Chemical mapping of a 207-nucleotide RNA with 2A3 and DMS. For 2A3, 2,241 sequencing reads were counted. The reactions ran in a buffer of 150 mM KOAc, 10 mM MgCl2 and 150 mM bicine (pH 8.5), at 24 C. Reactivities are rounded to 0.1 and cut off at 0 and 3. It was measured as part of the RMDB library RNAMAK. For DMS, 1,728 sequencing reads were counted.
[RMDB]
RNA sequence: GGGAACGACUCGAGUAGAGUCGAAAACGCCCUCUUCGGAGGGCGAAAAAGGGGUCUACUGCGUCAGAGGGACAUGCUCUGAAGCCUCCACGGAGCAACAGCCUCCCCACCUGACCAGUAGACGGAGGCACCCAAAAAAGCUAUCUUCGGAUAGCAACAAAUUUAAUCUGUUCGCAGAUUAAAUUUGAAAAGAAACAACAACAACAAC
Reactivity to 2A3 in 0.01 (KOAc 150mM, MgCl2 10mM, bicine 150mM(pH8.5), 24C), signal-to-noise 2, nucleotides 027 to 156: c000g000c020c000c000u000c000u000u030c090g150g000a000g000g030g000c000g000a000a000a000a000a010g230g000g030g000u000c000u030a020c000u020g100c130g050u000c010a000g150a300g120g000g010a000c020a050u030g010c000u010c000u010g030a070a060g000c030c000u010c000c000a010c020g000g000a010g000c000a030a160c040a090g100c030c090u050c000c010c000c030a290c050c000u000g000a000c000c000a000g000u000a010g000a000c010g000g000a000g000g000c000a030c000c020c000a060a080a020a020a000a000g000c000u000a000u010c010u040u070c130g110g000a000u000a000g030c000a010a000
Reactivity to DMS in 0.01 (KOAc 150mM, MgCl2 10mM, bicine 150mM(pH8.5), 24C), signal-to-noise 1, nucleotides 027 to 156: c000g050c000c010c030u000c050u010u000c300g000g020a010g000g090g030c020g020a030a000a000a050a030g000g040g090g020u020c000u040a040c010u000g000c130g000u010c040a030g010a090g000g020g000a130c040a270u000g000c000u010c010u010g010a050a170g040c040c020u000c000c030a300c030g010g000a060g020c000a070a090c080a130g010c050c050u000c000c000c070c200a060c040c000u000g030a040c020c010a110g050u000a010g010a000c030g010g000a050g050g040c000a140c010c000c000a000a090a150a140a150a160g020c000u000a010u000c000u000u000c300g050g000a070u000a010g000c010a040a020